RNA sequence: GGGAACGACUCGAGUAGAGUCGAAAAAGCACUGCCCGAAUUACUGGCACUGGGGGGGCAGUUGGUCGUCUUGGGGAGCGGAGAUGCCACGCUGCAAGAGGCAUUUCUAGCCGCCGCAGCAGAGCAACGGACCACUUUUAUUCGUAAAAGUGGUCCGAAAAGAAACAACAACAACAAC
Reactivity to DMS in 0.01 (KOAc 150mM, MgCl2 10mM, bicine 150mM(pH8.5), 24C), signal-to-noise 1, nucleotides 027 to 126: a000g020c070a090c000u000g030c010c000c040g000a120a080u000u020a080c130u000g020g000c030a080c070u000g010g000g000g000g000g000g020c060a040g020u000u000g000g010u000c050g010u000c040u010u000g030g000g000g020a210g010c110g000g000a070g000a080u000g000c010c020a120c210g000c080u000g030c050a080a080g010a190g000g030c000a100u000u000u010c130u000a140g000c020c040g000c160c060g000c050a020g020c020a150g050a150g030c040a050a140
The record gives the reactivity of an RNA of 177 nucleotides to DMS. Values cover nucleotides 27 to 126. Values are in units of 0.01, from 0 to 300, in steps of 10. Source: RMDB library OK2TRN, as collected in RNAgym.